[RMDB]
RNA sequence: GGGAACGACUCGAGUAGAGUCGAAAAUAAGUCGCGCCGCCUUUUGGCGAGAGGAGCCAUACGAAAGCGGAUGGCCGGCAAAAGCUCCCAGCGCGCGAGUUGAGAGGCUAAACCGAGGUCAGCGGGCGGGUUAACUGGUAUUCGUACCAGUUAACCCAAAAGAAACAACAACAACAAC
Reactivity to DMS in 0.01 (KOAc 150mM, MgCl2 10mM, bicine 150mM(pH8.5), 24C), signal-to-noise 2, nucleotides 027 to 126: u020a000a120g050u000c000g010c020g010c000c000g000c010c020u000u000u000u000g030g060c000g000a090g000a300g000g000a020g000c000c090a140u020a120c180g000a170a080a100g000c050g000g000a130u000g010g010c040c020g000g020c090a100a040a090a110g000c010u020c000c000c000a110g000c020g030c000g020c020g000a090g000u000u000g000a120g000a120g000g000c020u040a040a100a080c070c050g020a120g010g010u020c020a070g030c000g000g000g000c080
Reactivity to 2A3 in 0.01 (KOAc 150mM, MgCl2 10mM, bicine 150mM(pH8.5), 24C), signal-to-noise 3, nucleotides 027 to 126: u130a020a000g070u000c010g000c000g000c030c000g050c000c000u080u300u160u300g010g000c000g010a010g000a020g000g020a020g000c030c020a050u100a110c110g130a190a070a030g060c000g030g030a020u030g040g040c010c000g000g000c040a050a000a000a090g000c000u000c000c000c020a030g030c000g000c000g000c000g010a050g020u080u130g110a140g020a030g030g000c040u060a150a000a010c020c000g020a030g000g100u070c020a010g010c040g020g000g000c010
Chemical mapping of a 177-nucleotide RNA with DMS and 2A3. For DMS, 2,266 sequencing reads were counted. It was measured as part of the RMDB library RFM100. Values cover nucleotides 27 to 126. 2A3 adducts were read by reverse transcription with SuperScript II with manganese.